[RMDB]
RNA sequence: GGGAACGACUCGAGUAGAGUCGAAAAUAAUACCUGGUUCCGCGACCAGGUUGCGGCAGGACGUCAGCAACUCGAGCACGGUGAUGUGCUUCCCCAUGACAUGGUCGAAUCCUCUGCUGCAGCAUGGUCUCCCAAAUAGUUUCGACUAUUUGGGAGAAAAAGAAACAACAACAACAAC
Reactivity to DMS in 0.01 (KOAc 150mM, MgCl2 10mM, bicine 150mM(pH8.5), 24C), signal-to-noise 6, nucleotides 027 to 126: u010a100a130u010a100c030c010u010g010g010u000u000c030c140g020c220g000a100c000c010a010g010g020u000u000g010c020g010g000c010a020g000g000a090c140g000u000c010a050g010c110a040a050c160u000c140g000a030g010c010a020c030g000g020u010g020a120u010g020u000g000c050u000u000c010c010c000c050a180u000g010a020c040a140u010g010g020u000c100g000a110a100u000c020c010u000c010u000g010c020u000g010c020a050g010c090a050u000g010g000
Reactivity to 2A3 in 0.01 (KOAc 150mM, MgCl2 10mM, bicine 150mM(pH8.5), 24C), signal-to-noise 4, nucleotides 027 to 126: u090a000a030u090a070c010c010u020g050g000u040u030c070c070g080c140g050a010c010c000a000g000g000u000u020g000c000g000g010c000a000g030g050a050c070g020u020c010a010g000c020a050a050c050u050c150g030a010g020c010a000c030g050g130u230g090a180u280g010u000g020c000u020u030c010c010c000c000a040u050g000a010c030a050u110g060g000u060c070g080a060a060u090c000c000u020c010u020g000c010u010g000c000a000g010c000a020u040g030g000
Chemical mapping of a 177-nucleotide RNA with DMS and 2A3. For DMS, 8,061 sequencing reads were counted. The data come from the RNA Mapping Database (RMDB), library OK2TST. The 2A3 profile rests on 7,407 reads. The reactions ran in a buffer of 150 mM KOAc, 10 mM MgCl2 and 150 mM bicine (pH 8.5), at 24 C. For DMS the reverse transcriptase was MarathonRT.